An RNA of 177 nucleotides, treated with DMS and 2A3 and read out base by base. DMS adducts were read by reverse transcription with MarathonRT. For 2A3 the reverse transcriptase was SuperScript II with manganese.

RNA sequence: GGGAACGACUCGAGUAGAGUCGAAAAGAGUGACCACACAGUUCUUGUCAAAGAGACCAGGGUCGUCGCCGGAACUCGCAUGACAAUAGGCGAGGUCGUACCAGAUGCGACCUCUCCGGCACCCUUGUCCGUAGAAAUCUUUCGAGAUUUCUACGGAAAAAGAAACAACAACAACAAC
Reactivity to DMS in 0.01 (KOAc 150mM, MgCl2 10mM, bicine 150mM(pH8.5), 24C), signal-to-noise 4, nucleotides 027 to 126: g020a100g010u000g010a090c010c050a090c120a140c200a090g010u000u010c040u000u010g010u000c300a090a130a140g000a050g000a060c070c060a130g030g000g000u000c090g020u010c090g010c000c000g010g030a050a070c180u000c050g020c050a090u010g020a090c160a100a090u010a050g020g030c060g000a010g020g010u000c000g050u000a050c020c290a170g010a300u000g000c010g000a010c000c020u000c030u000c000c000g010g010c070a080c000c010c010u000u000g010
Reactivity to 2A3 in 0.01 (KOAc 150mM, MgCl2 10mM, bicine 150mM(pH8.5), 24C), signal-to-noise 3, nucleotides 027 to 126: g060a020g070u050g030a040c040c000a090c010a020c000a120g040u080u040c030u060u070g070u070c050a100a070a050g060a010g010a010c000c000a070g040g030g010u020c050g040u060c040g010c010c000g020g020a060a060c060u060c090g020c050a070u160g080a140c050a160a190u150a210g060g020c020g010a000g000g020u000c000g000u000a030c060c120a150g080a250u030g020c000g010a000c000c000u000c010u030c000c000g000g010c010a060c000c020c000u000u080g050
Record summary: The 2A3 profile rests on 2,638 reads. It was measured as part of the RMDB library OK2TRN.